[RMDB]
About this RNA: Structure probing data (DMS and 2A3) for a 207-nucleotide construct. The data come from the RNA Mapping Database (RMDB), library OK3TST.
RNA sequence: GGGAACGACUCGAGUAGAGUCGAAAAGGCGGUCACGGAGCUGGAUGACAACGCGACGUUCUGGUACGACGAGCCGUUUGUGGCGCUGUCGGUGACUGAUCGCGAGCAGGUCCUUCGGAAUCUCGAUGUGGACACCGCCGAUGAGGACCCAACCGGAGACUUAUCCUGUAUUCGUACAGGAUAAGUCAAAAGAAACAACAACAACAAC
Reactivity to DMS in 0.01 (KOAc 150mM, MgCl2 10mM, bicine 150mM(pH8.5), 24C), signal-to-noise 1, nucleotides 027 to 156: g010g030c000g010g050u000c020a140c050g010g020a160g010c000u000g000g010a130u010g000a130c060a130a160c150g010c000g010a110c020g000u000u000c040u010g040g000u000a040c050g020a090c010g010a060g040c000c000g020u000u000u000g030u010g020g020c000g000c040u020g060u000c020g020g000u000g010a070c020u020g020a060u000c010g050c000g010a120g000c060a180g020g070u010c010c030u000u010c080g030g010a120a100u000c010u010c020g000a230u020g000u000g000g000a110c030a020c020c020g030c000c000g000a130u010g010a080g030g010a100c010c000c020a110a210c010c000g000g010a300
Reactivity to 2A3 in 0.01 (KOAc 150mM, MgCl2 10mM, bicine 150mM(pH8.5), 24C), signal-to-noise 4, nucleotides 027 to 156: g030g000c000g010g080u120c030a030c020g050g000a040g020c010u020g000g050a060u060g010a010c010a100a060c040g020c010g030a020c010g040u080u070c070u130g040g180u180a060c030g010a010c010g010a020g020c020c010g030u080u200u140g270u220g020g030c080g000c160u120g010u010c000g050g030u090g020a030c010u050g010a240u020c010g000c030g010a000g070c100a040g050g100u000c020c000u030u020c000g150g020a270a290u080c030u050c060g190a290u190g030u030g030g030a020c010a030c050c050g000c020c010g000a010u060g080a040g040g020a010c010c000c000a040a080c010c080g100g030a070

2A3 is a SHAPE reagent: it acylates the 2'-hydroxyl of flexible nucleotides of all four kinds.
The RNA was probed in 150 mM KOAc, 10 mM MgCl2 and 150 mM bicine (pH 8.5) at 24 C.